[RMDB]
RNA sequence: GGGAACGACUCGAGUAGAGUCGAAAACUUCGAGGACCUCCUCUCUGGACUUGGGACCCUUUUUCUUUGGAGUUGCGUCCAUCGGGGGCUUCGGGGGACGAGGCUCGUCUCCUGUGCUUCUCAAAGAAGACAGAGUCGGCCCGCCCCUCCGUCGCGAUCCAGAAGAAAGGUUCGCCUUUCUUCUGGAAAAAGAAACAACAACAACAAC
Reactivity to 2A3 in 0.01 (KOAc 150mM, MgCl2 10mM, bicine 150mM(pH8.5), 24C), signal-to-noise 1, nucleotides 027 to 156: c030u090u070c030g030a030g010g030a140c020c000u010c000c000u070c030u020c030u050g000g030a050c020u060u040g060g060g160a130c050c000c010u070u070u020u010u010c070u040u120u120g020g010a130g010u040u100g040c030g010u000c010c010a130u030c030g000g000g000g000g030c000u030u020c010g000g000g020g040g000a010c010g040a190g000g040c090u110c300g030u000c010u030c020c040u050g040u110g110c000u010u030c080u050c070a160a190a020g030a010a000g000a000c010a010g000a010g030u010c010g000g050c020c000c020g000c020c000c000c030u000c010c000g030u000c010g010c030g050a070

Chemical mapping of a 207-nucleotide RNA with 2A3. The data come from the RNA Mapping Database (RMDB), library VIROID. Values cover nucleotides 27 to 156. Reactivities are rounded to 0.1 and cut off at 0 and 3. 2A3 adducts were read by reverse transcription with SuperScript II with manganese.